[RMDB]
RNA sequence: GGGAACGACUCGAGUAGAGUCGAAAAUACAUCUAGGUUUCAGAAGACUCGGCAUAUUAACCCAAGCAGCAUCCCCGUGGAACCAACGCUCAACAGAUGUGGGAUUUGGUAGACCUCCUACUACGUAUAAUUUAUUGUUAGCGGGUAUCCCGCUAGCGUCAUAUUAAGUUUUCGAACUUAAUAUGACAAAAGAAACAACAACAACAAC
Reactivity to 2A3 in 0.01 (KOAc 150mM, MgCl2 10mM, bicine 150mM(pH8.5), 24C), signal-to-noise 4, nucleotides 027 to 156: u090a000c030a040u040c040u080a060g010g050u000u070u080c070a070g060a120a040g020a160c050u040c070g050g020c040a060u120a050u150u130a120a050c000c020c040a030a010g020c030a000g000c010a040u050c000c010c000c010g030u020g020g010a010a010c010c000a020a030c050g040c050u090c070a030a190c030a060g120a100u070g020u060g020g030g000a040u080u050u100g030g010u040a030g050a080c010c010u050c010c010u010a020c000u010a020c030g090u120a060u030a180a100u060u170u180a120u090u160g010u010u010a000g000c000g000g020g030u170a160u220c040c010c010g000c020u000a000g000c020
Reactivity to DMS in 0.01 (KOAc 150mM, MgCl2 10mM, bicine 150mM(pH8.5), 24C), signal-to-noise 1, nucleotides 027 to 156: u000a060c050a080u000c040u000a150g010g020u000u000u000c030a200g000a200a170g000a030c010u000c060g030g020c080a110u000a080u010u000a070a120c030c020c000a090a140g000c020a120g030c030a100u000c000c010c030c020g030u000g020g020a090a100c000c000a070a070c040g030c080u000c060a060a110c080a100g020a090u010g010u000g020g020g010a110u000u000u000g010g020u010a090g010a130c060c020u010c020c000u000a100c030u000a020c080g040u010a030u000a040a120u000u000u010a040u010u010g000u010u000a050g000c020g000g020g030u000a080u010c040c000c000g020c000u000a020g000c130